[RMDB]
RNA sequence: GGGAACGACUCGAGUAGAGUCGAAAAGAUAUGGAUCUGUUGUCAGAGCCUGCAUAUCGGAAACGAUAUGAAGCUCUUGGAUUUACAGAGUCCUAAGUCAAAAGAACUCAGCUUCGGCUGAGUUCAACAUGCCAGUAUAGUUCGCUAUACUGGCAUGAAAAGAAACAACAACAACAAC
Reactivity to DMS in 0.01 (KOAc 150mM, MgCl2 10mM, bicine 150mM(pH8.5), 24C), signal-to-noise 5, nucleotides 027 to 126: g000a050u000a300u010g000g000a260u000c010u000g020u000u000g010u000c010a020g000a000g020c070c060u000g010c010a010u000a010u000c000g000g010a140a090a190c010g010a010u000a010u000g000a160a170g000c000u000c000u010u030g030g010a020u000u000u000a010c020a000g000a050g010u000c010c000u010a040a130g010u010c030a080a090a120a200g000a010a000c000u000c000a010g020c000u000u010c250g020g000c000u010g000a020g010u000u000c000a050a150
Reactivity to 2A3 in 0.01 (KOAc 150mM, MgCl2 10mM, bicine 150mM(pH8.5), 24C), signal-to-noise 3, nucleotides 027 to 126: g020a030u090a040u170g000g000a010u000c000u000g000u020u010g020u010c010a010g020a010g010c050c070u200g140c020a000u020a000u000c010g010g010a060a100a040c010g000a010u000a000u010g080a060a000g000c000u010c030u080u250g120g000a030u230u160u190a010c010a010g080a030g160u090c000c000u040a190a020g060u030c030a000a040a020a300g000a010a000c010u000c000a010g010c000u090u210c300g050g000c010u000g000a000g000u010u010c000a000a020